[RMDB]
RNA sequence: GGGAACGACUCGAGUAGAGUCGAAAAGGUCAGAGUGCGGCAAUUUACUUUCUGUCGACAUUCGCGUCCGCUCCGACGCCUGACUACGGGCCUCGCUAUGUGGGGCGUAUCGACGGGACGUAUGUUCGGUUGAGCUACAUUUCGAUGUAGCUCAACCAAAAGAAACAACAACAACAAC
Reactivity to 2A3 in 0.01 (KOAc 150mM, MgCl2 10mM, bicine 150mM(pH8.5), 24C), signal-to-noise 1, nucleotides 027 to 126: g010g000u040c020a030g020a020g090u080g050c020g000g000c010a050a030u000u160u170a030c040u090u040u000c020u030g030u010c000g000a060c030a140u110u090c030g020c030g120u040c010c010g000c000u000c010c030g020a000c000g020c030c000u110g080a300c100u140a160c140g010g010g000c000c010u010c020g020c080u170a090u240g050u050g030g000g000g000c000g000u010a000u030c000g000a000c000g000g020g000a020c020g030u030a040u150g160u060u160c060
Reactivity to DMS in 0.01 (KOAc 150mM, MgCl2 10mM, bicine 150mM(pH8.5), 24C), signal-to-noise 2, nucleotides 027 to 126: g010g000u010c030a090g000a060g010u000g030c030g020g020c070a080a040u000u010u020a070c100u000u000u000c070u010g000u000c000g020a050c110a080u010u010c030g000c030g010u000c000c030g000c030u010c140c040g000a030c240g000c010c010u000g010a150c240u010a150c120g010g020g000c030c030u000c010g010c140u020a040u020g000u010g000g000g010g010c030g020u010a020u000c020g000a040c040g000g000g000a020c100g030u000a020u010g010u010u000c120

Conditions: 150 mM KOAc, 10 mM MgCl2 and 150 mM bicine (pH 8.5), 24 C.
This 177-nucleotide RNA was probed chemically with 2A3 and DMS.
High 2A3 reactivity points to a flexible backbone, as in loops and unpaired stretches.
For DMS, 2,243 sequencing reads were counted.
It was measured as part of the RMDB library OK2TST.